[RMDB]
This 177-nucleotide RNA was probed chemically with DMS and 2A3.

RNA sequence: GGGAACGACUCGAGUAGAGUCGAAAAGACAUACUAAAUAUUAGAAUGAUUAUGUUAAGGAGAUGGCGCAUACGUAUAUUCGAGUUGUAUUAGCUUUACCACAUAUGCGUGUUAUGCACCCUUUGUAACCAACAGUGGGAUUCGUCCCACUGUUGGUAAAAGAAACAACAACAACAAC
Reactivity to DMS in 0.01 (KOAc 150mM, MgCl2 10mM, bicine 150mM(pH8.5), 24C), signal-to-noise 3, nucleotides 027 to 126: g000a030c030a040u000a040c030u000a040a110a130u060a140u020u000a120g010a220a090u020g020a070u020u000a060u010g000u010u000a070a110g000g020a060g040a040u050g000g000c020g000c010a030u010a000c020g000u010a050u010a050u010u020c120g020a080g020u000u010g040u050a060u060u020a070g000c030u020u000u000a120c230c050a060c110a020u010a000u020g010c020g020u000g010u000u000a060u000g000c040a130c040c000c040u030u000u000g000u020a070
Reactivity to 2A3 in 0.01 (KOAc 150mM, MgCl2 10mM, bicine 150mM(pH8.5), 24C), signal-to-noise 4, nucleotides 027 to 126: g010a000c010a050u130a020c030u090a000a180a120u300a160u210u100a140g100a220a140u100g070a130u120u050a040u070g130u100u070a070a020g090g000a120g010a130u130g130g010c030g000c010a000u020a030c000g030u040a030u000a020u060u300c170g040a030g100u010u020g040u090a150u090u100a070g020c070u020u100u040a050c030c000a000c000a010u030a000u050g030c000g010u070g040u110u030a040u040g010c020a030c000c000c000u060u000u090g160u090a020
The DMS profile rests on 3,872 reads. Values cover nucleotides 27 to 126. It was measured as part of the RMDB library OK1LIB.